[RMDB]
RNA sequence: GGGAACGACUCGAGUAGAGUCGAAAAGAUAUGGACCGAUGGCCUUUCGAUAAGCUCGGUAUCGGAAACGAUACGGAGCUUUUGACGAAAGGUCGGUCCUAAGUCAAAAGUUGCCUUCGGGCAACAACAAGAGCAAGUAGUUCGCUACUUGCUCUUGAAAAGAAACAACAACAACAAC
Reactivity to DMS in 0.01 (KOAc 150mM, MgCl2 10mM, bicine 150mM(pH8.5), 24C), signal-to-noise 5, nucleotides 027 to 126: g010a030u010a300u000g000g010a000c000c010g000a210u020g040g010c020c010u000u000u000c000g010a170u000a030a020g020c000u000c000g000g050u000a000u000c000g010g000a140a090a240c010g010a010u000a000c000g010g000a000g010c010u000u000u000u000g000a300c140g000a010a000a000g020g040u000c000g010g000u000c000c000u000a010a090g010u010c060a100a100a100a130g010u000u000g000c000c000u000u010c270g030g010g010c010a000a010c010a110a230
Reactivity to 2A3 in 0.01 (KOAc 150mM, MgCl2 10mM, bicine 150mM(pH8.5), 24C), signal-to-noise 2, nucleotides 027 to 126: g050a020u080a060u120g010g000a000c040c100g170a300u170g200g030c000c020u000u000u000c010g090a080u030a210a000g000c010u000c090g160g010u000a010u010c020g000g020a100a020a040c040g010a000u020a010c070g160g030a020g000c000u010u010u010u000g010a040c000g000a010a000a010g000g000u020c000g000g000u030c000c000u020a130a040g040u000c020a100a000a010a210g010u020u010g010c010c000u050u130c300g080g000g010c010a000a000c010a010a000